Background: Chemical mapping of a 177-nucleotide RNA with 2A3 and DMS. High DMS reactivity at an A or C suggests that its Watson-Crick edge is free. Conditions: 150 mM KOAc, 10 mM MgCl2 and 150 mM bicine (pH 8.5), 24 C.
RNA sequence: GGGAACGACUCGAGUAGAGUCGAAAAGAAAGAAAAAGAAAUCAUGAAAUGCGGUCAACCGUCAGAAUUUCGGGCGGAAAUACGACAUUAAGCAGAAAGCCGGCCGCAAUGUCGUUUAAGAAGAAAAAGGAUACGUGCUAUUCGUAGCACGUAUCCUAAAAGAAACAACAACAACAAC
Reactivity to 2A3 in 0.01 (KOAc 150mM, MgCl2 10mM, bicine 150mM(pH8.5), 24C), signal-to-noise 2, nucleotides 027 to 126: g150a010a120a000g050a100a090a000a030a000g200a100a240a000u090c000a000u140g000a080a020a000u110g000c000g000g000u020c010a040a060c000c010g020u020c040a000g110a030a000u120u200u060c070g000g020g000c000g010g090a020a110a000u250a050c000g000a000c000a000u080u040a130a040g000c170a040g120a100a080a000g110c020c000g000g000c000c000g000c000a010a020u000g000u000c010g010u030u060u110a130a140g050a070a000g010a000a020a000a030
Reactivity to DMS in 0.01 (KOAc 150mM, MgCl2 10mM, bicine 150mM(pH8.5), 24C), signal-to-noise 1, nucleotides 027 to 126: g000a010a050a020g010a000a000a000a100a060g020a090a030a000u000c030a070u000g000a120a060a150u000g000c000g010g010u000c090a160a300c000c000g000u000c010a000g070a000a300u000u000u000c000g000g000g000c000g000g020a090a070a000u010a030c070g000a010c090a060u000u030a080a040g000c170a170g040a150a070a140g030c150c000g020g080c000c000g000c000a000a000u000g000u000c000g000u000u030u000a080a090g000a080a080g020a060a020a040a070
Background: Values cover nucleotides 27 to 126.